[RMDB]
RNA sequence: GGGAACGACUCGAGUAGAGUCGAAAACAUGGACGGUGGAGACACGGGGUUGCGACAUUCUCCUCUGAGGCGAAAGUCUCUCUUACCCGGGGUGCCGAAGGUCAGAUAAGUUGGCGUUGCGGAACCCUCUUGGGUUGCUCUUCGGGGCGACUCAAGAAAAAGAAACAACAACAACAAC
Reactivity to 2A3 in 0.01 (KOAc 150mM, MgCl2 10mM, bicine 150mM(pH8.5), 24C), signal-to-noise 7, nucleotides 027 to 126: c050a070u090g060g030a030c030g030g030u040g040g050a050g010a020c030a020c100g040g000g000g010u050u060g030c010g010a010c020a120u090u060c020u030c030c000u020c080u090g040a020g020g010c020g040a080a020a010g020u000c010u000c000u000c020u070u070a090c010c000c020g010g000g000g000u080g020c000c010g020a030a020g060g000u020c000a010g020a160u150a220a090g080u060u040g050g000c200g020u000u050g030c020g020g010a030a040c000c000c000
Reactivity to DMS in 0.01 (KOAc 150mM, MgCl2 10mM, bicine 150mM(pH8.5), 24C), signal-to-noise 8, nucleotides 027 to 126: c100a070u010g010g000a070c070g010g020u010g010g000a080g010a080c120a070c100g000g000g000g010u000u010g010c050g000a070c090a070u010u000c050u010c010c040u010c090u010g000a060g000g000c020g000a090a110a120g010u000c010u000c020u000c080u010u020a120c040c030c030g000g000g000g000u010g000c020c010g010a070a060g000g010u010c020a040g000a130u040a080a110g020u010u010g000g000c090g000u000u000g000c020g000g000a110a030c010c000c000